[RMDB]
RNA sequence: GGGAACGACUCGAGUAGAGUCGAAAAAUCGACGGUAACAAUCACGAUCGCGCAAGGACUUUCCGCCAUGAUCCGACGAGUUGCCUCGACGCCGUCCAUCACCGGCAUGAGCAGGUCCAUCAGCACACACUACGCCUGAGUUCGCUCAGGCGUAGUGAAAAGAAACAACAACAACAAC
Reactivity to DMS in 0.01 (KOAc 150mM, MgCl2 10mM, bicine 150mM(pH8.5), 24C), signal-to-noise 2, nucleotides 027 to 126: a110u000c020g000a030c150g020g000u010a070a040c060a160a090u000c070a110c190g000a050u020c040g010c060g020c130a140a100g020g020a060c090u010u000u000c050c030g020c030c110a120u010g010a030u010c030c010g000a070c110g000a160g000u010u010g030c010c000u000c010g040a020c070g000c040c030g000u000c010c050a030u010c060a040c130c010g040g000c020a050u010g000a080g040c080a020g010g010u000c070c040a050u040c020a080g000c100a110c170a130
Reactivity to 2A3 in 0.01 (KOAc 150mM, MgCl2 10mM, bicine 150mM(pH8.5), 24C), signal-to-noise 1, nucleotides 027 to 126: a000u070c030g020a030c070g000g060u050a070a000c010a070a070u020c010a020c090g060a020u030c030g000c020g010c100a140a170g090g000a050c030u110u180u010c040c040g000c010c040a070u170g030a020u040c020c010g000a040c030g030a030g090u010u020g060c020c020u060c010g020a010c080g000c030c010g000u040c030c040a030u060c020a040c000c030g050g000c030a080u140g020a020g080c050a010g000g030u010c000c010a020u030c040a050g000c050a020c020a000